[RMDB]
RNA sequence: GGGAACGACUCGAGUAGAGUCGAAAAGAGAAGUCCUGAUGAGCUUGUACUUAAUAGCGAAUUCAAGAUUGGUAGGCUCUGGCUAUAAAGGCAACUUUCAAAUCAAAAGAGGUUCAGAUGGAAAGGCCAGUGAAUUAUCCUUCGGGAUAAUUCACUGAAAAGAAACAACAACAACAAC
Reactivity to DMS in 0.01 (KOAc 150mM, MgCl2 10mM, bicine 150mM(pH8.5), 24C), signal-to-noise 2, nucleotides 027 to 126: g000a080g000a150a070g010u000c000c010u000g000a110u020g020a240g020c050u010u000g030u000a050c120u010u000a150a050u000a020g000c040g000a090a110u010u010c070a080a040g000a130u010u010g000g010u000a080g030g000c040u000c050u000g020g000c030u000a060u010a050a050a050g000g020c040a070a090c060u010u000u000c050a040a070a090u000c110a020a060a060a090g010a100g000g030u000u000c000a100g010a100u010g000g000a060a050a050g000g000c110
Reactivity to 2A3 in 0.01 (KOAc 150mM, MgCl2 10mM, bicine 150mM(pH8.5), 24C), signal-to-noise 1, nucleotides 027 to 126: g100a000g000a200a020g050u020c000c040u040g000a070u060g010a000g010c000u040u100g090u150a170c000u050u300a090a100u020a050g040c000g040a050a030u030u100c020a000a060g080a170u150u200g000g050u060a070g070g000c030u000c070u110g030g000c020u080a020u070a220a060a000g010g000c020a030a000c020u040u120u130c140a140a210a230u060c020a010a100a100a000g070a070g020g010u060u060c020a010g020a100u040g010g050a030a010a020g010g040c000
Conditions: 150 mM KOAc, 10 mM MgCl2 and 150 mM bicine (pH 8.5), 24 C.
Chemical mapping of a 177-nucleotide RNA with DMS and 2A3.